[RMDB]
RNA sequence: GGGAACGACUCGAGUAGAGUCGAAAAUCGUUUUCUCUUAUUCGCCCUCAGAGAAGAGCGUCCUAGAUGGGAAGACUAUAUAUAUUUGUGGGUGUAUAGUUUUGUCUGGGAGCAGACGGAGGAGACGGGAUAAUUUAUUUUUCGAAAUAAAUUAUCCAAAAGAAACAACAACAACAAC
Reactivity to 2A3 in 0.01 (KOAc 150mM, MgCl2 10mM, bicine 150mM(pH8.5), 24C), signal-to-noise 7, nucleotides 027 to 126: u100c000g000u010u000u000u000c000u000c000u010u060a080u090u060c010g040c000c010c000u030c040a070g050a010g020a180a020g040a020g040c010g120u020c000c010u010a020g010a040u070g020g010g120a030a010g010a000c000u000a000u000a000u000a000u000a040u020u090u100g080u070g050g100g010u020g000u000a000u000a000g000u010u000u040u080g030u000c010u000g000g000g000a010g030c010a020g030a030c060g010g000a010g010g010a010g000a010c010g020
Reactivity to DMS in 0.01 (KOAc 150mM, MgCl2 10mM, bicine 150mM(pH8.5), 24C), signal-to-noise 4, nucleotides 027 to 126: u070c030g010u010u000u000u010c000u010c010u000u020a140u040u030c060g000c010c020c010u010c050a080g000a100g000a110a080g010a110g000c060g000u010c000c010u000a060g010a070u010g010g020g000a080a050g010a070c010u000a000u000a010u000a020u010a110u020u010u010g020u020g010g020g040u000g010u000a000u010a000g000u000u010u010u000g000u010c000u000g000g000g010a130g020c050a080g010a060c290g000g000a030g000g010a020g010a020c030g000

An RNA of 177 nucleotides, treated with 2A3 and DMS and read out base by base. The DMS profile rests on 11,655 reads. It was measured as part of the RMDB library OK1LIB.